[RMDB]
RNA sequence: GGGAACGACUCGAGUAGAGUCGAAAAUCAGCAAUUGCUCGGUGUGAUGGACGGCAGCUCCUGUCUCCCCGAAGGCGUUCCGUCGAAUUGGACCAUAUUCUUUGGUGCCGAGGACGUUGACGAGACGGCGAAGGGAACGGUUCGCCGUUCCCUUCGCAAAAGAAACAACAACAACAAC
Reactivity to 2A3 in 0.01 (KOAc 150mM, MgCl2 10mM, bicine 150mM(pH8.5), 24C), signal-to-noise 1, nucleotides 027 to 126: u110c000a000g100c010a010a120u210u200g050c030u000c040g070g000u040g050u040g090a090u070g050g030a020c000g000g000c050a070g000c010u030c020c000u020g000u020c060u030c050c020c000c010g090a040a030g040g070c010g010u080u060c000c000g010u000c010g000a060a120u080u120g070g020a050c020c000a030u030a110u260u130c200u040u050u070g000g000u110g150c000c000g000a030g070g000a010c030g050u030u110g010a070c020g000a010g050a100c080g080
Reactivity to DMS in 0.01 (KOAc 150mM, MgCl2 10mM, bicine 150mM(pH8.5), 24C), signal-to-noise 1, nucleotides 027 to 126: u000c040a110g000c060a130a080u010u000g000c010u020c050g010g000u010g010u010g020a040u000g010g000a250c020g010g000c110a060g000c010u010c030c010u000g000u000c050u000c030c010c000c040g010a110a070g010g010c050g020u000u000c090c000g010u000c000g000a170a150u000u000g000g000a060c000c040a000u000a130u000u010c160u010u000u000g020g000u000g020c000c000g000a040g030g000a120c140g000u000u020g020a030c090g000a130g000a040c070g040
Conditions: 150 mM KOAc, 10 mM MgCl2 and 150 mM bicine (pH 8.5), 24 C. The record gives the reactivity of an RNA of 177 nucleotides to 2A3 and DMS. For DMS the reverse transcriptase was MarathonRT. The 2A3 profile rests on 1,117 reads. Values cover nucleotides 27 to 126. The data come from the RNA Mapping Database (RMDB), library OK2TRN.